RNA sequence: GGGAACGACUCGAGUAGAGUCGAAAAUACGUACUGGCUUCGCUCAAAGAAGUAAGACAUUUUGAUUAGCGGGGUAGGCAAAUCCUGGAGAGGCCCUAGUCUGAGUGGUAGUACGUUUGUAUACCACGAGUGUAUCUCCUUUCGAGGAGAUAUAUUCAAAAGAAACAACAACAACAAC
Reactivity to DMS in 0.01 (KOAc 150mM, MgCl2 10mM, bicine 150mM(pH8.5), 24C), signal-to-noise 9, nucleotides 027 to 126: u010a050c070g010u000a040c020u000g010g010c020u000u000c020g020c130u010c180a080a100a130g000a040a040g010u000a090a110g010a140c090a040u000u000u000u000g000a110u000u000a050g010c070g010g010g010g010u000a060g010g010c090a080a090a080u000c030c020u000g010g010a090g010a090g010g000c040c030c020u000a050g010u000c040u000g000a080g020u000g010g010u000a030g010u000a010c020g010u000u000u000g010u000a060u000a100c010c010a050c130
Reactivity to 2A3 in 0.01 (KOAc 150mM, MgCl2 10mM, bicine 150mM(pH8.5), 24C), signal-to-noise 9, nucleotides 027 to 126: u090a010c020g010u010a040c010u020g060g010c000u010u030c020g020c040u100c120a110a120a060g030a030a020g050u080a080a030g130a030c020a020u040u070u060u100g060a060u030u080a020g030c050g030g030g010g030u040a040g070g000c020a080a080a090u090c020c020u050g050g030a100g010a030g070g030c010c000c000u010a030g030u010c030u030g050a020g030u020g020g030u030a030g050u010a020c020g010u020u060u150g020u020a060u020a020c000c030a030c090
The record gives the reactivity of an RNA of 177 nucleotides to DMS and 2A3. Conditions: 150 mM KOAc, 10 mM MgCl2 and 150 mM bicine (pH 8.5), 24 C. The data come from the RNA Mapping Database (RMDB), library OK2TRN.